Chemical mapping of a 177-nucleotide RNA with DMS and 2A3. 2A3 adducts were read by reverse transcription with SuperScript II with manganese. The data come from the RNA Mapping Database (RMDB), library OK1LIB. The DMS profile rests on 2,232 reads.

RNA sequence: GGGAACGACUCGAGUAGAGUCGAAAACUUCGGCUACGGUCACCAACUAGCACUUUGAAAAACAAGAACAACAAAAGAAAGAAAAUGACGUUCAAACUGACCAACCGAACGGCAUUUAACCCACGAAGAUACCCAUAUCGUUCGCGAUAUGGGUAUCAAAAGAAACAACAACAACAAC
Reactivity to DMS in 0.01 (KOAc 150mM, MgCl2 10mM, bicine 150mM(pH8.5), 24C), signal-to-noise 2, nucleotides 027 to 126: c090u000u000c070g020g080c030u000a130c130g000g000u000c030a080c070c040a120a020c090u000a020g040c090a110c040u070u010u030g000a090a070a100a070a070c140a060a140g010a240a080c080a090a120c200a110a100a080a080g040a010a050a040g020a040a030a040a000u000g000a010c030g000u010u000c050a070a120a080c180u000g030a030c060c080a100a080c200c090g010a000a030c000g040g000c000a000u020u000u000a020a060c000c000c010a070c120g010a130a020
Reactivity to 2A3 in 0.01 (KOAc 150mM, MgCl2 10mM, bicine 150mM(pH8.5), 24C), signal-to-noise 6, nucleotides 027 to 126: c010u090u060c020g020g000c020u050a060c060g060g030u050c040a020c040c000a050a070c040u070a010g050c030a080c080u090u100u130g120a090a040a020a000a010c120a060a030g140a100a060c040a060a010c070a050a160a030a030g160a120a100a000g100a060a100a030a020u050g040a020c010g000u000u040c040a060a070a100c070u110g040a070c050c010a040a030c040c040g000a000a010c000g010g000c000a000u030u050u090a070a070c010c020c010a010c080g050a080a030